The data come from the RNA Mapping Database (RMDB), library TTRDEL. The record gives the reactivity of an RNA of 177 nucleotides to 2A3 and DMS. For DMS, 1,947 sequencing reads were counted. DMS adducts were read by reverse transcription with MarathonRT. The reactions ran in a buffer of 150 mM KOAc, 10 mM MgCl2 and 150 mM bicine (pH 8.5), at 24 C.

RNA sequence: GGGAACGACUCGAGUAGAGUCGAAAAGAUAUGGAAAUCUACCCACCUCCGAAAGCACGAAGAACUCGGAAACGAGGGAGUGCUAAGGAGAGGAUUUCCUAAGUCAAAACCGUCGUUCGCGACGGAACUAACUCCAUUUCUUCGGAAAUGGAGUUAGAAAAGAAACAACAACAACAAC
Reactivity to 2A3 in 0.01 (KOAc 150mM, MgCl2 10mM, bicine 150mM(pH8.5), 24C), signal-to-noise 3, nucleotides 027 to 126: g040a060u230a160u230g020g010a020a000a000u030c010u170a300c000c020c030a020c010c010u000c000c020g080a290a120a000g030c020a000c030g170a300a110g030a070a050c000u000c010g000g110a140a030a030c010g020a010g050g000g000a030g010u000g000c000u000a010a010g000g000a000g000a000g020g000a000u000u000u020c000c000u030a120a030g180u210c150a050a030a120a190c020c010g010u010c010g030u060u130c300g010c010g180a010c000g000g010a010a010
Reactivity to DMS in 0.01 (KOAc 150mM, MgCl2 10mM, bicine 150mM(pH8.5), 24C), signal-to-noise 3, nucleotides 027 to 126: g010a110u020a140u000g010g040a020a010a010u000c010u010a130c000c000c010a300c110c000u020c020c000g000a120a110a040g010c000a030c000g000a130a110g010a090a220c000u000c010g000g000a080a040a170c000g000a010g000g000g010a060g010u010g010c000u020a020a300g000g000a010g010a080g060g010a030u000u000u000c000c010u000a070a140g000u000c180a070a030a080a090c010c000g000u000c000g020u000u020c280g000c050g030a010c000g010g000a010a110